[RMDB]
Annotation:
Structure probing data (2A3 and DMS) for a 177-nucleotide construct. 2A3 is a SHAPE reagent: it acylates the 2'-hydroxyl of flexible nucleotides of all four kinds. 2A3 adducts were read by reverse transcription with SuperScript II with manganese.

RNA sequence: GGGAACGACUCGAGUAGAGUCGAAAACAGCGAUGAGUGGCGCAUGCUCCUCACGCCGCAGGAGAAGAUGCGGAGCUGCGCUCGCCCCCACCACCGCAUCCGUGCGCUCCAACACGAGGGGGAGGUCUCCCUUUCACUACUUCGGUAGUGAAAGGGAAAAAGAAACAACAACAACAAC
Reactivity to 2A3 in 0.01 (KOAc 150mM, MgCl2 10mM, bicine 150mM(pH8.5), 24C), signal-to-noise 2, nucleotides 027 to 126: c080a010g060c020g070a120u080g040a080g120u090g000g010c020g000c030a050u270g020c000u000c020c000u040c020a050c040g220c030c070g040c110a050g020g050a110g010a050a090g040a050u040g010c020g010g020a010g000c100u060g060c070g030c070u050c040g040c000c010c000c000c000a010c000c000a030c000c000g060c010a010u020c030c030g010u000g000c010g030c030u020c000c000a110a060c040a000c040g040a090g020g030g000g010g000a000g050g010u010c040
Reactivity to DMS in 0.01 (KOAc 150mM, MgCl2 10mM, bicine 150mM(pH8.5), 24C), signal-to-noise 2, nucleotides 027 to 126: c150a090g010c070g020a080u020g010a120g010u010g020g000c000g000c080a040u010g010c010u000c030c010u000c010a050c130g020c060c110g000c100a080g010g000a100g000a140a110g000a050u010g010c120g000g010a090g010c050u000g020c010g000c030u000c080g000c030c010c000c000c020a110c120c020a030c050c030g020c030a090u000c030c050g000u000g020c070g020c050u020c060c090a090a130c070a040c030g000a120g000g000g010g000g010a020g000g010u000c130
For DMS, 1,807 sequencing reads were counted. It was measured as part of the RMDB library OK2TST. For DMS the reverse transcriptase was MarathonRT. The 2A3 profile rests on 1,948 reads. Conditions: 150 mM KOAc, 10 mM MgCl2 and 150 mM bicine (pH 8.5), 24 C.